[RMDB]
RNA sequence: GGGAACGACUCGAGUAGAGUCGAAAAACAAUUACUCUAAAACAUGAGGAUUGUACUACUGUCUUUAUUGGAGAUUACUAUUCAGUCGUUGAUAAACUAGCAACUUCAGGUUUCUUUACAAACGAUAAAGUACAUCAAGACCUCACAACGCAGUGCAUAGCACGUAUCACUUCGGUGAUACGUGCUAAAAAGAAACAACAACAACAAC
Reactivity to 2A3 in 0.01 (KOAc 150mM, MgCl2 10mM, bicine 150mM(pH8.5), 24C), signal-to-noise 1, nucleotides 027 to 156: a000c000a000a000u070u020a300c000u000c030u100a060a140a160a040c050a070u210g000a000g000g000a040u030u030g010u030a090c080u010a000c030u070g040u260c110u110u300u030a190u020u090g030g000a000g000a010u140u120a200c010u050a070u100u110c000a000g050u020c000g000u020u020g040a120u110a100a180a100c100u130a040g030c000a000a040c000u170u210c160a000g000g000u050u010u040c010u000u190u230a100c130a200a250a010c010g000a070u070a090a040a000g010u090a020c030a010u010c050a110a050g010a070c000c010u210c000a100c040a120a200c180g020c090a050g000u010g120c090a030
Conditions: 150 mM KOAc, 10 mM MgCl2 and 150 mM bicine (pH 8.5), 24 C. This 207-nucleotide RNA was probed chemically with 2A3. The 2A3 profile rests on 293 reads. The data come from the RNA Mapping Database (RMDB), library OK3TST.